[RMDB]
RNA sequence: GGGAACGACUCGAGUAGAGUCGAAAAGGUGGCGAAGGCGGAUCACUGGGCCAUUACUGACGCUGAGGAGCGAAAGCGUGGGGAGCGAACAGAAUUAGAUACUCUGGUAGUCUACGCCGUAAACGGGAAUUAUUUUAAAAUUCGUUUUAAAAUAAUUAAAAGAAACAACAACAACAAC
Reactivity to DMS in 0.01 (KOAc 150mM, MgCl2 10mM, bicine 150mM(pH8.5), 24C), signal-to-noise 9, nucleotides 027 to 126: g010g020u010g010g010c040g010a110a100g000g000c060g010g010a070u010c070a090c070u010g000g000g010c030c040a060u020u020a090c070u010g000a160c050g010c030u000g010a130g010g010a090g010c040g010a070a110a090g000c080g020u000g000g000g000g000a110g000c050g000a080a140c060a040g000a060a050u010u020a100g000a130u040a080c060u000c030u010g000g010u020a090g000u010c030u000a060c070g010c010c030g010u020a030a070a090c090g000g000g010
Reactivity to 2A3 in 0.01 (KOAc 150mM, MgCl2 10mM, bicine 150mM(pH8.5), 24C), signal-to-noise 9, nucleotides 027 to 126: g050g010u040g010g010c040g030a070a030g040g010c030g020g030a050u070c020a020c110u040g010g030g000c020c010a030u040u130a060c040u040g040a020c020g000c030u050g030a080g050g060a050g030c020g030a100a040a010g030c020g020u050g000g020g010g020a050g020c030g010a040a010c000a030g050a050a020u110u080a060g040a090u090a100c020u010c020u060g050g000u020a030g030u000c020u030a030c040g030c010c010g020u060a070a100a040c040g020g010g010